Chemical mapping of a 177-nucleotide RNA with DMS. Conditions: 150 mM KOAc, 10 mM MgCl2 and 150 mM bicine (pH 8.5), 24 C. Reactivities are given for positions 27 through 126.
RNA sequence: GGGAACGACUCGAGUAGAGUCGAAAAGAUAUGGAGACAUUUAUCAGCGCAGCAGAUACAGGAGCUGUAUCGGAAACGAUACAGCAAUCCUGUAUCUGCUGAACUACGCUGUGAUGUCUCCUAAGUCCCUAACUAACAUGUUCGCAUGUUAGUUAGGAAAAGAAACAACAACAACAAC
Reactivity to DMS in 0.01 (KOAc 150mM, MgCl2 10mM, bicine 150mM(pH8.5), 24C), signal-to-noise 4, nucleotides 027 to 126: g000a090u010a300u000g010g010a010g010a010c000a010u000u010u010a140u020c000a010g030c000g020c010a010g000c000a010g000a010u000a010c010a010g010g020a110g000c000u000g010u000a000u010c000g010g010a130a110a240c000g000a020u000a010c000a000g000c010a030a020u000c000c010u010g000u000a010u000c000u000g000c000u000g000a010a030c210u010a300c020g020c010u010g010u000g000a010u000g000u000c000u000c000c000u000a020a070g010u010c040